Record summary
An RNA of 207 nucleotides, treated with DMS and 2A3 and read out base by base. For DMS, 2,305 sequencing reads were counted. It was measured as part of the RMDB library OK3TST. Reactivities are rounded to 0.1 and cut off at 0 and 3.

[RMDB]
RNA sequence: GGGAACGACUCGAGUAGAGUCGAAAAGGUACCCUGCAUGAGGUAGGCAGGAAGUCCGAUGAACAUGUAUCCGCAAUUGUACCUAGAAUGAAUCUCUGAGACACGGUUGAGGUACUUGUGGCAGAAUAUGGAAGCGACCUUGGUAGCAUAACUGGAACCAUGUCGUUCUUUUCGAAGAACGACAUGGAAAAGAAACAACAACAACAAC
Reactivity to DMS in 0.01 (KOAc 150mM, MgCl2 10mM, bicine 150mM(pH8.5), 24C), signal-to-noise 1, nucleotides 027 to 156: g000g090u000a180c030c000c000u000g050c060a130u020g000a070g000g020u010a060g010g020c080a080g000g000a090a060g000u000c000c000g030a200u000g010a060a130c020a050u010g040u000a080u020c030c010g000c030a100a050u000u000g050u000a110c050c000u000a080g010a060a070u030g010a130a190u010c040u020c020u010g010a070g000a100c030a050c020g000g030u000u000g010a070g000g040u000a040c020u000u000g000u000g000g080c070a040g000a080a080u000a100u010g000g040a030a050g010c030g000a050c050c040u010u000g010g010u000a060g040c010a030u000a010a110c050u020g000g000a230a260
Reactivity to 2A3 in 0.01 (KOAc 150mM, MgCl2 10mM, bicine 150mM(pH8.5), 24C), signal-to-noise 4, nucleotides 027 to 156: g030g010u080a070c010c030c000u000g000c040a060u090g020a050g070g070u080a040g010g020c010a010g030g060a020a010g050u000c030c000g030a080u090g030a040a040c050a050u060g060u100a100u060c010c010g060c030a020a050u080u180g000u010a010c010c010u030a040g120a080a140u150g050a030a070u080c080u010c060u120g090a040g030a110c050a020c080g070g000u040u060g060a020g000g030u010a030c000u020u030g040u010g020g000c050a020g040a090a020u110a080u120g030g000a070a030g010c000g030a010c010c000u040u030g040g000u070a020g050c020a050u060a170a050c050u040g070g030a050a050